The record gives the reactivity of an RNA of 177 nucleotides to DMS and 2A3. Reactivities are given for positions 27 through 126. The DMS profile rests on 2,967 reads.
RNA sequence: GGGAACGACUCGAGUAGAGUCGAAAAUAGAAUACUGAUACUUGCAUAAUGAGUAUGGGACCGCUCUUACAAUCUUACGUUCCACACGCCUUAGCCUUCAGCGAGCAUUGGAGCAGAUCCAACAGGCCCAGAUGUUUUGUUUCGACAAAACAUCUGGAAAAGAAACAACAACAACAAC
Reactivity to DMS in 0.01 (KOAc 150mM, MgCl2 10mM, bicine 150mM(pH8.5), 24C), signal-to-noise 3, nucleotides 027 to 126: u030a120g000a070a140u030a080c050u000g000a030u000a020c040u020u000g000c040a120u020a160a070u030g020a070g000u010a010u040g000g000g000a080c100c070g000c020u030c010u010u040a140c090a040a090u050c130u010u040a130c150g020u000u000c000c000a040c090a090c110g000c040c010u000u020a080g000c010c030u000u060c130a100g040c090g000a040g000c080a160u020u010g000g020a040g000c110a120g000a110u000c020c010a050a140c140a110g010g030c120
Reactivity to 2A3 in 0.01 (KOAc 150mM, MgCl2 10mM, bicine 150mM(pH8.5), 24C), signal-to-noise 6, nucleotides 027 to 126: u170a030g130a050a030u130a130c050u070g050a050u050a070c030u080u040g080c060a100u110a100a130u300g020a010g020u030a020u070g010g020g050a020c000c000g020c030u000c030u050u100a070c070a090a100u040c030u120u060a050c060g050u030u000c020c000a030c000a010c100g020c010c010u050u070a020g010c010c010u090u110c040a020g000c020g040a020g030c050a040u010u070g020g000a040g000c040a020g020a150u010c020c000a020a050c020a060g060g030c000